[RMDB]
Notes
Structure probing data (2A3) for a 207-nucleotide construct. Reactivities are given for positions 27 through 156. The data come from the RNA Mapping Database (RMDB), library M2RFPK.
RNA sequence: GGGAACGACUCGAGUAGAGUCGAAAACGUUGUCAUCGACAACACCCUAUGCAUUCAUGCUCUGUAAGGAUGCGCCGAAAGGUUAGCAAGCCCGAGUUGCCCAGACCUGAAAUGCAACACUUUAGAGAAAACCCGAAGCAGUUCGCUGCUUCGGGAACACUGCUUCCAAGUUCGCUUGGAAGCAGUGAAAAGAAACAACAACAACAAC
Reactivity to 2A3 in 0.01 (KOAc 150mM, MgCl2 10mM, bicine 150mM(pH8.5), 24C), signal-to-noise 1, nucleotides 027 to 156: c080g000u030u000g030u020c120a250u090c280g050a000c000a040a010c000a030c020c010c020u060a160u040g000c020a010u000u000c030a000u050g010c030u060c010u030g030u050a100a000g010g010a040u020g000c000g000c000c000g070a090a000a030g030g000u090u070a030g010c010a010a240g000c010c000c000g120a160g090u080u130g140c040c110c020a010g010a000c000c020u030g000a020a010a140u030g100c000a000a130c070a060c090u220u150u160a050g000a010g070a050a100a040a000c000c000c010g000a000a000g000c000a010g010u030u210c230g030c110u020g000c000u030u000c000g000g020g000a000a000